[RMDB]
RNA sequence: GGGAACGACUCGAGUAGAGUCGAAAACCAUUCCAUGUGCGUUCCUCCCAGAACUGCACACCUGGUCAAAGAGGAAGGCCUUUCCUGAUAAAGGAGGACCAUUCUCAGUCAAGGGUAUGUGAGUACCGCGGUCUGUCCUUUUCGAAGGACAGACCGCAAAAGAAACAACAACAACAAC
Reactivity to 2A3 in 0.01 (KOAc 150mM, MgCl2 10mM, bicine 150mM(pH8.5), 24C), signal-to-noise 1, nucleotides 027 to 126: c000c000a000u110u000c000c030a050u050g000u000g000c000g030u120u000c000c000u040c000c000c000a000g000a000a090c080u270g000c000a000c000a000c000c120u060g000g000u070c160a060a060a060g060a030g020g000a030a000g000g000c000c020u160u300u050c090c000u110g140a250u260a300a160a000g000g000a030g040g080a080c000c000a040u000u000c030u000c060a090g050u090c000a050a000g150g040g130u080a080u090g160u040g140a080g080u000a090c000c020